An RNA of 207 nucleotides, treated with 2A3 and DMS and read out base by base.
The DMS profile rests on 4,388 reads.
The data come from the RNA Mapping Database (RMDB), library OK3TST.
The reactions ran in a buffer of 150 mM KOAc, 10 mM MgCl2 and 150 mM bicine (pH 8.5), at 24 C.
RNA sequence: GGGAACGACUCGAGUAGAGUCGAAAAGAUAAGGAAAGUCCCAGGACUUAUCAGCUGGGAUAGGCCUCACUUACAAGACAGCUCUGUUCAGUAUUUGGAAGAAAGCCUGACAGGUUUCUUCGGAAAAGUGGCCAUCCAUGGAAUGAAUGAAAUGUUAGAUACUAAAUCGAUUCGUCGAUUUAGUAUCAAAAGAAACAACAACAACAAC
Reactivity to 2A3 in 0.01 (KOAc 150mM, MgCl2 10mM, bicine 150mM(pH8.5), 24C), signal-to-noise 3, nucleotides 027 to 156: g010a010u060a030a030g000g060a210a010a030g060u020c020c010c010a010g030g040a040c050u120u090a060u190c040a040g120c040u110g030g000g000a020u050a080g010g000c010c010u060c020a070c030u020u100a020c000a020a000g010a020c030a020g030c010u010c030u300g110u190u030c000a010g010u050a150u090u140u170g070g020a090a040g070a140a100a020g050c020c000u010g010a010c030a020g010g000u000u000u020c010u020u040c050g040g000a060a080a010a020g020u000g010g000c000c000a010u000c000c000a020u040g060g080a070a080u080g000a040a050u070g010a060a100a020u110g010u110u120a040
Reactivity to DMS in 0.01 (KOAc 150mM, MgCl2 10mM, bicine 150mM(pH8.5), 24C), signal-to-noise 3, nucleotides 027 to 156: g020a090u000a030a030g020g020a130a140a160g010u010c000c010c000a220g020g000a210c050u000u000a030u000c030a150g010c040u000g010g000g010a030u000a040g020g010c000c020u000c040a090c040u010u010a070c000a050a150g010a090c040a080g000c070u000c070u010g010u010u000c060a170g000u000a130u000u000u010g040g030a050a090g010a090a050a110g020c080c010u020g030a100c110a090g030g000u000u000u000c000u000u000c060g010g000a060a070a030a070g000u000g010g000c020c020a110u010c000c010a100u000g000g010a090a220u010g020a120a130u000g000a080a080a130u010g010u000u000a140